RNA sequence: GGGAACGACUCGAGUAGAGUCGAAAAUUAAGGAUACUACAAUAUGAGCAACUGAAAGAGAAUGACUUACACUGCUUCUUUAUUGCAGCAUGUAUCUUCAAUGUCAUGGUUUCAAGGGGUAGACAUGGCCUACUAAGUUGGAGGGAGGUCCUUAGGGGAGAGUGUCACUUUUCGAAGUGACACUCUCAAAAGAAACAACAACAACAAC
Reactivity to 2A3 in 0.01 (KOAc 150mM, MgCl2 10mM, bicine 150mM(pH8.5), 24C), signal-to-noise 1, nucleotides 027 to 156: u070u050a030a030g050g000a010u000a070c000u010a020c050a110a060u100a120u230g110a040g060c020a010a150c050u190g100a070a130a020g130a000g010a080a120u130g010a040c010u030u040a010c040a000c040u030g000c000u030u060c020u050u300u160a090u220u170g010c040a040g000c000a070u070g000u000a060u040c070u110u120c050a100a000u110g030u110c010a000u110g120g000u080u000u000c040a070a190g020g010g000g040u010a000g000a040c010a100u040g000g020c010c030u000a060c010u090a010a150g100u110u040g020g070a070g080g010g000a020g030g020u030c040c000u030u070a040g000g000g000

Structure probing data (2A3) for a 207-nucleotide construct.
The 2A3 profile rests on 461 reads.
The reactions ran in a buffer of 150 mM KOAc, 10 mM MgCl2 and 150 mM bicine (pH 8.5), at 24 C.